[RMDB]
Chemical mapping of a 177-nucleotide RNA with 2A3 and DMS. The data come from the RNA Mapping Database (RMDB), libraries RFM100 and RFMREP.
RNA sequence: GGGAACGACUCGAGUAGAGUCGAAAAUUUGUGGCUCCCACAAAAAUGGCAAGUUGUCCAAGUGCCGACUUUGCGGACGUAGGAAGCAAACAAAGGACAAUUCGACUGCCGAAGGAACGUAGGCACAACCUUUCAUGCUGUUCGCAGCAUGAAAGGUAAAAGAAACAACAACAACAAC
Reactivity to 2A3 in 0.01 (KOAc 150mM, MgCl2 10mM, bicine 150mM(pH8.5), 24C), signal-to-noise 3, nucleotides 027 to 126: u070u050u080g060u000g030g020c040u030c020c090c000a020c020a000a080a020a000a010u120g020g030c040a030a060g030u010u010g010u020c000c010a200a050g020u000g020c000c000g020a000c010u000u040u090g040c040g050g010a070c060g020u030a050g100g060a080a020g010c010a050a030a040c040a050a070a070g030g010a010c020a000a000u050u070c030g110a050c030u070g020c010c030g080a020a010g060g040a100a000c080g040u050a050g010g030c000a000c000a030
Reactivity to DMS in 0.01 (KOAc 150mM, MgCl2 10mM, bicine 150mM(pH8.5), 24C), signal-to-noise 3, nucleotides 027 to 126: u000u000u030g040u000g030g000c060u010c020c010c030a090c120a020a040a020a080a170u050g000g000c000a170a050g000u000u000g000u030c010c010a220a200g000u000g020c000c000g010a080c260u000u000u000g060c010g000g000a300c130g010u060a030g020g000a300a080g000c050a010a060a000c210a060a050a100g000g000a040c030a020a060u000u000c100g030a030c150u020g010c000c000g010a090a110g000g020a060a040c120g030u000a070g000g010c030a030c010a200